Record summary
This 177-nucleotide RNA was probed chemically with 2A3 and DMS. For DMS the reverse transcriptase was MarathonRT. Source: RMDB libraries RFM100 and RFMREP, as collected in RNAgym. The reactions ran in a buffer of 150 mM KOAc, 10 mM MgCl2 and 150 mM bicine (pH 8.5), at 24 C.
RNA sequence: GGGAACGACUCGAGUAGAGUCGAAAACAGCACAUGUGUGACAGUGUUGAUCACAAGUCAUUGCCAGCUCUGUUCAUUUUCUUCCCUGGUCUAACUCAAUAAUUGCCAUCAUGAAAAUUCUGGGUGACCAUAGCCAAACUUUCGAGUUUGGCUAUGGAAAAGAAACAACAACAACAAC
Reactivity to 2A3 in 0.01 (KOAc 150mM, MgCl2 10mM, bicine 150mM(pH8.5), 24C), signal-to-noise 8, nucleotides 027 to 126: c020a000g050c040a040c030a110u100g060u030g040u060g070a020c020a050g040u020g020u110u090g050a080u110c030a020c010a080a070g040u020c030a090u020u090g030c030c020a010g010c030u000c010u040g050u110u050c020a070u050u090u070u040c020u010u020c000c000c000u010g030g000u010c040u060a070a040c000u000c060a060a070u070a180a090u090u060g010c020c000a050u080c020a040u110g170a040a090a020a050u090u040c030u050g010g010g010u030g030a020
Reactivity to DMS in 0.01 (KOAc 150mM, MgCl2 10mM, bicine 150mM(pH8.5), 24C), signal-to-noise 4, nucleotides 027 to 126: c060a050g000c120a080c100a110u010g000u020g030u010g000a050c020a070g030u010g000u010u010g000a140u010c040a050c050a150a090g020u010c080a040u000u010g010c030c000a100g010c060u010c030u010g030u010u000c050a060u000u000u010u000c050u000u010c030c020c010u000g000g000u000c060u020a140a050c060u020c020a070a040u010a050a060u000u010g000c090c020a040u030c100a070u020g000a060a060a060a060u010u000c080u010g010g000g010u000g020a150